[RMDB]
RNA sequence: GGGAACGACUCGAGUAGAGUCGAAAAUGCGGUGUAAAUCUUUCUGGUCGUCAUGGGGUUGCCUCCUAUGCUGAAGGCUUAACUGCACCGAUACAAAACUGGAUCAAUCCCACUCUCAACCAUUACAGCCGGGUGACUAUUUCGAUAGUCACCCGGCAAAAGAAACAACAACAACAAC
Reactivity to 2A3 in 0.01 (KOAc 150mM, MgCl2 10mM, bicine 150mM(pH8.5), 24C), signal-to-noise 1, nucleotides 027 to 126: u110g040c020g020g000u050g010u070a060a100a070u040c030u040u080u000c140u150g000g070u070c050g000u010c120a030u000g000g000g040g040u050u140g050c070c000u110c000c000u040a050u090g090c120u040g010a000a000g000g000c030u010u040a020a010c070u090g040c020a070c070c000g070a000u070a080c130a000a220a170a010c030u130g080g000a090u090c000a000a000u050c120c000c000a080c000u000c000u000c000a040a040c030c000a050u080u210a050c070a000